[RMDB]
RNA sequence: GGGAACGACUCGAGUAGAGUCGAAAAUUAGUAGCGAAGCGCACUAUAGCGACGGCCAUCGUUGUAGGUAGCAGAACUACUGAGUACGCUACUUGAUACGUGAAUCGCCACACGUUAAAAAAGGCAGUCUGUCAACUAAUUUCGAUUAGUUGACAGAAAAAGAAACAACAACAACAAC
Reactivity to 2A3 in 0.01 (KOAc 150mM, MgCl2 10mM, bicine 150mM(pH8.5), 24C), signal-to-noise 9, nucleotides 027 to 126: u100u050a000g000u000a000g010c010g030a130a010g030c020g010c060a040c100u010a010u020a020g010c010g010a010c020g170g030c030c010a020u020c000g010u000u010g010u010a020g020g050u060a030g000c030a020g040a050a020c020u080a030c020u050g000a020g040u050a030c040g010c030u030a040c010u060u110g080a080u090a170c000g000u010g030a060a100u090c080g000c010c000a010c010a000c020g090u220u240a020a080a010a010a000a010g010g000c000a000g050
Reactivity to DMS in 0.01 (KOAc 150mM, MgCl2 10mM, bicine 150mM(pH8.5), 24C), signal-to-noise 9, nucleotides 027 to 126: u010u010a010g010u000a010g010c020g000a300a160g010c040g010c210a300c010u000a020u000a010g000c010g000a020c060g010g010c220c110a180u000c010g010u000u010g030u000a010g000g000u030a300g010c000a040g010a230a180c020u000a030c020u020g000a060g000u000a070c100g010c030u020a040c060u010u010g020a050u020a040c010g000u000g010a040a140u020c180g000c010c040a030c010a010c000g000u000u050a010a010a000a000a030a180g020g010c000a070g010
Conditions: 150 mM KOAc, 10 mM MgCl2 and 150 mM bicine (pH 8.5), 24 C.
This 177-nucleotide RNA was probed chemically with 2A3 and DMS.
It was measured as part of the RMDB libraries RFM100 and RFMREP.
Values cover nucleotides 27 to 126.